RNA sequence: GGGAACGACUCGAGUAGAGUCGAAAAGAUAUGGAGGUGUGAUGGACAUGCUGUAUGGUCGGAAACGACCAGACAGCAACAGCCAUACACCUCCUAAGUCAAACUAUUUGUCUUCGGACAAAUAGAACAAGAUUCGAUGGUUCGCCAUCGAAUCUUGAAAAGAAACAACAACAACAAC
Reactivity to DMS in 0.01 (KOAc 150mM, MgCl2 10mM, bicine 150mM(pH8.5), 24C), signal-to-noise 1, nucleotides 027 to 126: g020a090u000a030u000g000g000a000g010g020u000g010u010g000a000u000g010g020a070c110a160u000g010c010u000g010u000a020u000g010g010u000c000g000g010a020a020a040c010g030a010c000c000a000g000a010c000a000g010c010a060a030c250a160g010c010c000a030u000a030c010a000c000c000u000c000c000u000a000a100g010u000c000a250a120a260c010u000a000u000u000u010g000u010c000u010u020c300g070g000a000c010a000a000a020u000a000g010a110a220
Structure probing data (DMS) for a 177-nucleotide construct. High DMS reactivity at an A or C suggests that its Watson-Crick edge is free. The RNA was probed in 150 mM KOAc, 10 mM MgCl2 and 150 mM bicine (pH 8.5) at 24 C. For DMS the reverse transcriptase was MarathonRT. It was measured as part of the RMDB library TTRDES.